[RMDB]
RNA sequence: GGGAACGACUCGAGUAGAGUCGAAAAGAUAUGGACGCAGGUAGACAUGCUGGUUCGGAAACGAACCUGCAACAGCUAUAUUGGCGUCCUAAGUCAAAAGCACUUUGCGCUUCGGCGCAAAGUGCAACACCAGAUAUAUGUUCGCAUAUAUCUGGUGAAAAGAAACAACAACAACAAC
Reactivity to DMS in 0.01 (KOAc 150mM, MgCl2 10mM, bicine 150mM(pH8.5), 24C), signal-to-noise 3, nucleotides 027 to 126: g010a020u000a180u010g000g000a010c000g010c000a040g000g020u000a010g010a140c070a130u000g010c000u000g000g000u000u000c010g010g010a040a050a110c010g000a000a010c000c000u000g000c000a030a100c300a130g010c110u010a020u000a060u000u020g010g000c000g000u000c000c000u000a010a100g000u000c010a080a080a100a050g020c000a010c000u000u000u000g000c000g020c000u000u010c190g020g000c000g030c000a000a000a000g010u000g010c010a020a060
Reactivity to 2A3 in 0.01 (KOAc 150mM, MgCl2 10mM, bicine 150mM(pH8.5), 24C), signal-to-noise 3, nucleotides 027 to 126: g010a020u040a020u070g000g000a000c000g000c020a020g040g070u030a010g060a240c060a110u030g000c000u030g000g020u000u000c000g000g000a020a010a010c000g000a000a000c000c000u000g020c010a020a030c030a070g110c060u020a000u030a050u120u150g150g020c000g000u000c000c010u000a020a000g020u010c030a000a040a130a090g000c000a020c020u000u040u030g000c060g010c020u090u210c300g100g010c010g000c000a000a000a000g000u000g010c000a000a000
Record summary
Chemical mapping of a 177-nucleotide RNA with DMS and 2A3. It was measured as part of the RMDB library TTRDEL. For DMS, 4,675 sequencing reads were counted.